[RMDB]
About this RNA
The record gives the reactivity of an RNA of 177 nucleotides to DMS and 2A3. For 2A3, 966 sequencing reads were counted. DMS adducts were read by reverse transcription with MarathonRT.
RNA sequence: GGGAACGACUCGAGUAGAGUCGAAAAGAAGGUUUCGAUUUAUUGUUAUACCAUGGUUACGCUUUCGAUUGGAUUAUAUCCAAUACCGAAGCAGUAAUGGAUGGUUAUUUACAUCCAGAAAAAGUAACAGAGGACUACUGUUCGCAGUAGUCCUCUGAAAAGAAACAACAACAACAAC
Reactivity to DMS in 0.01 (KOAc 150mM, MgCl2 10mM, bicine 150mM(pH8.5), 24C), signal-to-noise 2, nucleotides 027 to 126: g020a130a200g020g020u000u000u000c030g000a130u000u010u010a060u020u010g010u010u000a130u010a020c020c000a000u000g000g020u000u000a000c010g030c000u000u000u000c300g010a080u000u010g000g020a030u000u040a170u000a300u020c000c000a000a000u000a090c170c000g000a000a020g000c020a110g050u000a000a020u010g020g000a000u000g000g000u000u010a020u000u000u000a060c030a050u000c050c040a150g000a020a030a050a040a080g000u020a030a080
Reactivity to 2A3 in 0.01 (KOAc 150mM, MgCl2 10mM, bicine 150mM(pH8.5), 24C), signal-to-noise 2, nucleotides 027 to 126: g060a040a020g130g000u070u070u080c050g020a060u060u090u110a140u080u170g070u030u080a080u020a000c000c000a010u020g030g050u000u000a010c000g010c000u080u070u130c010g020a000u000u000g000g000a040u130u100a090u170a020u240c000c040a000a010u020a160c090c010g020a000a000g060c040a000g010u010a000a010u080g110g030a010u010g000g020u010u010a040u010u030u010a010c040a040u000c030c000a020g300a040a140a130a000a000g030u030a050a030